[RMDB]
RNA sequence: GGGAACGACUCGAGUAGAGUCGAAAACGCGAUAAGGGAUGCCUGCCUCGCAAUGAGGCAGGUCGCAGUGACUCGGAGGCUCCGACUGUCUAAUAACAACAUAGGUGACCGCAAAUCCGCAAGGACGGCUGAGUAUAUUGUUCGCAAUAUACUCAGCAAAAGAAACAACAACAACAAC
Reactivity to 2A3 in 0.01 (KOAc 150mM, MgCl2 10mM, bicine 150mM(pH8.5), 24C), signal-to-noise 3, nucleotides 027 to 126: c040g010c030g020a030u050a160a110g080g030g050a040u110g020c000c010u000g000c000c010u000c010g080c160a080a200u300g010a000g000g020c020a000g000g020u010c000g010c010a020g030u010g030a030c020u000c020g040g020a040g010g040c010u000c020c010g040a040c030u010g000u040c020u010a090a120u090a180a080c090a000a000c010a030u030a020g070g000u030g050a110c030c000g020c030a050a060a050u020c010c000g000c060a040a020g060g010a000c040g060
Reactivity to DMS in 0.01 (KOAc 150mM, MgCl2 10mM, bicine 150mM(pH8.5), 24C), signal-to-noise 4, nucleotides 027 to 126: c100g010c010g010a100u000a070a130g030g000g000a110u010g000c000c000u000g000c000c000u000c000g010c200a130a080u020g020a000g000g010c000a000g010g000u010c060g020c040a130g010u010g000a090c040u000c040g020g010a170g010g010c050u010c010c020g000a080c110u010g000u000c090u000a090a070u020a140a100c130a050a100c100a050u000a090g000g010u010g000a090c030c020g010c110a050a100a110u000c000c010g010c170a050a120g000g000a050c200g010